[RMDB]
RNA sequence: GGGAACGACUCGAGUAGAGUCGAAAACCUGUUAUCUGACCAAUAACAGAAUGCACCACAGCGUAAAAUCAUCUGAUUGGGUGAGUUGGUCGCACCGCCAUUUGACGAACGAACGCCAAGCCUAACCACUACGAGUAUGUGUUCGCACAUACUCGAAACGACAAUGAUGAUUCGUCAUCAUUGUCGUAAAAGAAACAACAACAACAAC
Reactivity to DMS in 0.01 (KOAc 150mM, MgCl2 10mM, bicine 150mM(pH8.5), 24C), signal-to-noise 2, nucleotides 027 to 156: c060c000u010g010u000u000a070u000c020u010g020a160c050c060a300a010u010a010a060c000a050g000a070a100u010g010c090a130c010c020a110c090a060g000c020g030u010a100a070a120a100u000c020a030u000c040u000g010a120u010u010g000g010g010u000g000a270g010u010u000g010g000u000c040g000c010a040c000c010g030c070c010a140u000u000u000g020a110c070g010a080a100c160g000a050a030c020g000c030c020a050a130g010c010c010u010a060a080c020c000a140c080u000a220c010g000a100g020u000a010u010g040u000g050u000u010c300g080c040a010c020a020u010a000c000u000c000g010a020a060
Reactivity to 2A3 in 0.01 (KOAc 150mM, MgCl2 10mM, bicine 150mM(pH8.5), 24C), signal-to-noise 7, nucleotides 027 to 156: c000c000u000g000u000u000a000u010c010u000g010a010c010c010a010a000u010a000a000c000a000g060a090a100u150g030c040a030c060c010a030c040a020g040c030g060u100a030a090a070a090u050c030a040u020c040u090g080a190u120u180g110g000g010u020g010a050g000u020u040g010g000u000c020g010c020a000c000c010g070c040c010a060u050u040u110g050a050c040g010a160a040c040g030a040a020c030g020c010c020a040a030g030c000c020u070a070a080c040c020a070c080u180a070c030g000a000g000u000a000u000g020u000g020u030u070c180g040c060a000c000a000u000a000c000u010c000g000a020a040
An RNA of 207 nucleotides, treated with DMS and 2A3 and read out base by base. Source: RMDB library M2RFPK, as collected in RNAgym. Values cover nucleotides 27 to 156. The RNA was probed in 150 mM KOAc, 10 mM MgCl2 and 150 mM bicine (pH 8.5) at 24 C. For DMS the reverse transcriptase was MarathonRT.